Structure probing data (2A3 and DMS) for a 177-nucleotide construct. For DMS, 1,830 sequencing reads were counted. Reactivities are given for positions 27 through 126. The reactions ran in a buffer of 150 mM KOAc, 10 mM MgCl2 and 150 mM bicine (pH 8.5), at 24 C. The 2A3 profile rests on 1,338 reads. It was measured as part of the RMDB library OK2TRN. DMS adducts were read by reverse transcription with MarathonRT.
[RMDB]
RNA sequence: GGGAACGACUCGAGUAGAGUCGAAAACAGGACAGAGAGGGCAGCUGAGGGCACAAUCCCGGAUCUUCCUGCUGCCCACCAGCCCUCCUCUUUCAGGGAAGACCCUCAGGAUCUGCCUCUGGGUUCCUCGCAGCAUAACAUUCGUGUUAUGCUGCGAAAAAGAAACAACAACAACAAC
Reactivity to 2A3 in 0.01 (KOAc 150mM, MgCl2 10mM, bicine 150mM(pH8.5), 24C), signal-to-noise 1, nucleotides 027 to 126: c030a000g060g090a040c040a030g050a020g050a040g100g110g070c040a010g000c010u020g010a020g020g030g000c060a020c070a190a190u060c000c000c040g030g010a060u030c020u040u060c020c000u020g060c030u040g000c000c000c000a000c030c000a000g020c000c020c010u070c050c040u010c070u080u150u050c040a030g000g000g060a000a040g060a090c000c020c000u020c000a020g080g030a130u010c030u060g050c040c000u000c040u030g090g000g000u060u030c020c020
Reactivity to DMS in 0.01 (KOAc 150mM, MgCl2 10mM, bicine 150mM(pH8.5), 24C), signal-to-noise 2, nucleotides 027 to 126: c100a090g000g000a100c040a080g000a060g010a110g020g010g010c050a030g010c050u000g020a070g000g000g020c090a050c160a090a200u000c000c000c010g030g010a090u000c040u000u000c030c040u000g000c060u000g000c020c030c020a040c070c050a070g010c010c020c010u000c020c020u000c060u000u000u000c110a090g020g010g000a130a120g010a120c010c000c000u000c030a010g020g010a170u000c010u000g000c010c010u000c000u000g000g000g000u000u000c000c030